[RMDB]
RNA sequence: GGGAACGACUCGAGUAGAGUCGAAAAGAUAUGGACGACUGAGGGAGCUCCUGUCGGAAACGACGCGAGCGACGAUCUCAUUCGUCCUAAGUCAAAACCUCCUAGAAAGUUCGCUUUCUAGGAGGAAUCAAGCAUAGCUCUUCGGAGCUAUGCUUGAAAAAGAAACAACAACAACAAC
Reactivity to DMS in 0.01 (KOAc 150mM, MgCl2 10mM, bicine 150mM(pH8.5), 24C), signal-to-noise 1, nucleotides 027 to 126: g000a020u000a260u030g020g000a040c030g000a000c130u010g000a020g020g010g000a110g020c000u010c000c010u030g030u000c000g010g000a070a040a140c000g020a020c000g010c300g000a000g010c020g030a050c230g000a090u020c020u000c000a000u020u000c000g020u000c000c000u000a010a030g000u000c030a090a100a070a280c020c020u000c010c000u000a010g000a020a010a010g000u000u000c240g020c000u000u000u000c000u000a000g010g000a010g000g000a010a020